Conditions: 150 mM KOAc, 10 mM MgCl2 and 150 mM bicine (pH 8.5), 24 C.
The record gives the reactivity of an RNA of 177 nucleotides to 2A3 and DMS.
For 2A3, 2,631 sequencing reads were counted.
High DMS reactivity at an A or C suggests that its Watson-Crick edge is free.
[RMDB]
RNA sequence: GGGAACGACUCGAGUAGAGUCGAAAAGAUAUGGAAAUCAUCUGUCGGGAGUCGACUAGUCGGAAACGACUAGCGACGAAGAACGACAGAGUGAUUUCCUAAGUCAAAACCUGUGUUCGCACAGGAAGUACUAAUCGUGCUUCGGCACGAUUAGUACAAAAGAAACAACAACAACAAC
Reactivity to 2A3 in 0.01 (KOAc 150mM, MgCl2 10mM, bicine 150mM(pH8.5), 24C), signal-to-noise 1, nucleotides 027 to 126: g020a030u070a040u180g000g010a010a000a010u020c010a000u000c000u020g010u020c000g010g040g020a070g020u010c020g060a300c120u020a000g000u000c030g000g090a050a030a160c000g000a000c000u000a020g000c000g000a010c010g040a040a000g040a020a000c000g000a000c000a000g010a010g010u030g000a000u000u000u000c010c010u000a080a010g030u010c060a000a030a180a230c010c010u010g000u020g050u090u120c300g120c080a000c020a020g030g030a010a070
Reactivity to DMS in 0.01 (KOAc 150mM, MgCl2 10mM, bicine 150mM(pH8.5), 24C), signal-to-noise 1, nucleotides 027 to 126: g000a010u050a300u000g020g010a000a020a000u000c000a130u010c000u000g040u000c000g000g030g020a160g000u000c000g000a210c010u010a000g030u010c010g000g010a160a080a180c010g030a000c000u010a010g010c000g000a000c040g000a060a130g000a170a170c000g030a000c010a000g000a010g010u020g010a010u000u000u000c010c000u000a030a120g030u000c040a130a130a100a130c020c000u000g020u000g030u000u000c210g040c020a000c020a020g000g010a060a100